[RMDB]
This 177-nucleotide RNA was probed chemically with DMS and 2A3. Conditions: 150 mM KOAc, 10 mM MgCl2 and 150 mM bicine (pH 8.5), 24 C. For 2A3, 2,116 sequencing reads were counted. Reactivities are given for positions 27 through 126. It was measured as part of the RMDB library TTRDEL. For DMS the reverse transcriptase was MarathonRT.
RNA sequence: GGGAACGACUCGAGUAGAGUCGAAAAGAUAUGGAGGACGUAGACAUGCUUAUCUCGGAAACGAGUAAGAGCAACAGCUACGGUCCUCCUAAGUCAAAACACAAAUUGUGUUCGCACAAUUUGUGAACCUUAGGUGCUACUUCGGUAGCACCUAAGGAAAAGAAACAACAACAACAAC
Reactivity to DMS in 0.01 (KOAc 150mM, MgCl2 10mM, bicine 150mM(pH8.5), 24C), signal-to-noise 2, nucleotides 027 to 126: g000a030u030a220u020g000g030a030g000g000a000c000g020u000a010g040a080c100a110u000g020c010u000u000a260u020c030u020c000g030g000a050a030a140c000g020a010g000u000a080a140g000a020g000c050a050a110c210a120g000c010u000a000c010g030g000u010c000c000u000c000c000u000a010a030g000u070c040a110a110a050a160c010a010c010a000a000a000u000u000g000u020g000u020u020c260g050c000a000c010a000a000u000u000u000g010u000g000a050a090
Reactivity to 2A3 in 0.01 (KOAc 150mM, MgCl2 10mM, bicine 150mM(pH8.5), 24C), signal-to-noise 1, nucleotides 027 to 126: g030a010u030a010u110g020g000a000g010g000a000c000g030u020a000g050a100c070a110u160g000c000u010u060a120u170c000u030c020g000g000a040a030a010c020g000a000g030u020a150a070g060a000g070c010a050a130c090a230g050c000u000a000c000g000g070u020c000c000u010c010c010u000a000a000g000u000c010a000a010a080a020c030a000c000a010a020a020u000u000g000u010g060u130u160c190g060c070a000c000a000a010u010u010u000g000u000g000a020a030